[RMDB]
RNA sequence: GGGAACGACUCGAGUAGAGUCGAAAAUCAAGUGUGAGAAGCAUGCCCACCUCUACCGCAAACUCAUCACCAACAUCCUGGGAGGCUGCAUCCAGGUCAGGAGGAAGGGGAGCUUGUGGGCUUAGAGGACCAAGAAGAGGUUCGCCUCUUCUUGGUCAAAAGAAACAACAACAACAAC
Reactivity to 2A3 in 0.01 (KOAc 150mM, MgCl2 10mM, bicine 150mM(pH8.5), 24C), signal-to-noise 1, nucleotides 027 to 126: u070c010a120a120g020u000g030u040g090a110g100a200a000g060c010a010u050g010c020c000c000a020c020c000u020c030u030a090c000c030g040c030a020a000a030c030u030c010a070u100c030a160c030c000a000a030c000a070u020c000c000u000g000g040g000a070g190g000c080u070g000c020a040u040c010c010a000g110g080u060c070a030g040g020a010g030g060a020a140g050g020g010g000a000g000c000u030u010g020u000g020g010g000c020u000u000a020g010a000g030
Reactivity to DMS in 0.01 (KOAc 150mM, MgCl2 10mM, bicine 150mM(pH8.5), 24C), signal-to-noise 2, nucleotides 027 to 126: u010c120a040a060g020u000g020u010g000a070g040a110a160g000c060a030u010g010c000c010c020a240c030c000u000c030u020a060c000c020g030c010a020a030a060c010u010c010a060u030c030a200c000c030a080a260c100a080u000c000c000u000g000g000g020a090g020g030c060u000g020c110a050u010c000c020a030g010g010u000c160a030g030g000a210g010g020a100a120g050g010g020g010a030g020c030u000u010g010u000g010g000g000c160u000u010a040g000a050g000

The record gives the reactivity of an RNA of 177 nucleotides to 2A3 and DMS. The data come from the RNA Mapping Database (RMDB), library OK2TRN. Conditions: 150 mM KOAc, 10 mM MgCl2 and 150 mM bicine (pH 8.5), 24 C.